[RMDB]
RNA sequence: GGGAACGACUCGAGUAGAGUCGAAAAGGAUGUUUGCAUUCUUGCGUCAAUGCAAACAUGAUUGGCUUCGUGGAGAAUUGACGCAAGAAUUCUCGGUCAAGCGGCACAAUGACCCACGAAGCCAAGACUAACUGCUUUGUGCCGCUAGUGGUUAGGAUCAUUAUAAUUAUUUCGAUAAUUAUAAUGAAAAAGAAACAACAACAACAAC
Reactivity to DMS in 0.01 (KOAc 150mM, MgCl2 10mM, bicine 150mM(pH8.5), 24C), signal-to-noise 2, nucleotides 027 to 156: g020g000a070u000g010u000u010u010g010c020a050u010u000c030u000u000g000c050g030u010c030a050a020u000g010c030a020a060a050c040a050u000g010a120u010u000g020g010c000u000u000c000g020u000g030g020a230g010a150a100u000u000g030a010c030g000c010a020a160g000a100a070u000u000c030u010c060g000g010u010c080a120a140g040c010g010g000c010a040c010a030a090u000g020a150c040c010c000a050c020g010a060a030g010c000c020a000a020g000a080c100u000a050a050c060u010g010c020u000u000u000g040u000g020c000c000g010c020u000a020g030u010g020g020u000u000a130g020g000a170
Reactivity to 2A3 in 0.01 (KOAc 150mM, MgCl2 10mM, bicine 150mM(pH8.5), 24C), signal-to-noise 2, nucleotides 027 to 156: g060g000a010u030g020u050u030u070g000c010a020u020u000c030u050u080g010c030g020u040c020a010a000u010g020c000a010a000a040c010a040u080g090a170u080u120g000g010c000u000u000c000g000u030g010g050a100g050a180a090u120u100g000a000c030g020c060a000a000g020a020a060u230u050c070u030c130g060g010u060c070a060a030g000c000g010g000c000a010c020a010a170u150g110a130c000c000c000a000c000g000a000a010g000c000c010a010a000g000a000c000u040a070a000c030u040g000c000u040u040u030g000u010g040c070c000g000c000u010a010g040u010g040g030u030u030a030g030g050a030
Chemical mapping of a 207-nucleotide RNA with DMS and 2A3. For DMS, 5,562 sequencing reads were counted. The 2A3 profile rests on 1,514 reads. Source: RMDB library OK3TST, as collected in RNAgym. DMS (dimethyl sulfate) methylates the pairing face of unpaired adenines and cytosines. The reactions ran in a buffer of 150 mM KOAc, 10 mM MgCl2 and 150 mM bicine (pH 8.5), at 24 C. For DMS the reverse transcriptase was MarathonRT.